RNA sequence: GGGAACGACUCGAGUAGAGUCGAAAAACAAGCUCGGUUCGCAAGGGCGGCCGCCCCUUUCGGAUAAGCUAAGCCACGUCGGAUCACAAAGGUGACAAAGCACUCAAAUCCGGUCACACGGAGUUGGUCUAAAUCAUUUAUUCGUAAAUGAUUUAGAAAAAGAAACAACAACAACAAC
Reactivity to 2A3 in 0.01 (KOAc 150mM, MgCl2 10mM, bicine 150mM(pH8.5), 24C), signal-to-noise 9, nucleotides 027 to 126: a000c050a040a010g010c020u040c080g130g000u090u060c010g010c040a040a060g050g020g000c000g030g070c030c040g030c010c000c000c010u010u040u040c040g020g000a030u030a080a010g000c020u050a050a030g040c010c000a050c020g050u040c030g040g020a070u030c010a010c040a090a140a040g090g010u020g040a020c020a050a110a020g050c020a020c040u080c030a050a070a040u010c010c010g030g040u090c040a030c010a010c070g030g010a050g020u060u080g030g020
Reactivity to DMS in 0.01 (KOAc 150mM, MgCl2 10mM, bicine 150mM(pH8.5), 24C), signal-to-noise 9, nucleotides 027 to 126: a100c120a090a080g020c020u000c080g010g030u000u010c030g020c090a060a070g010g000g010c060g000g010c090c050g000c050c010c000c010u000u010u010c030g010g010a040u000a100a060g000c030u000a070a120g000c010c020a050c090g010u010c050g010g000a080u010c040a060c080a060a100a080g000g010u000g000a060c070a070a110a120g010c070a060c080u010c050a050a050a090u010c020c020g000g000u000c220a070c120a120c020g010g000a070g020u000u000g010g000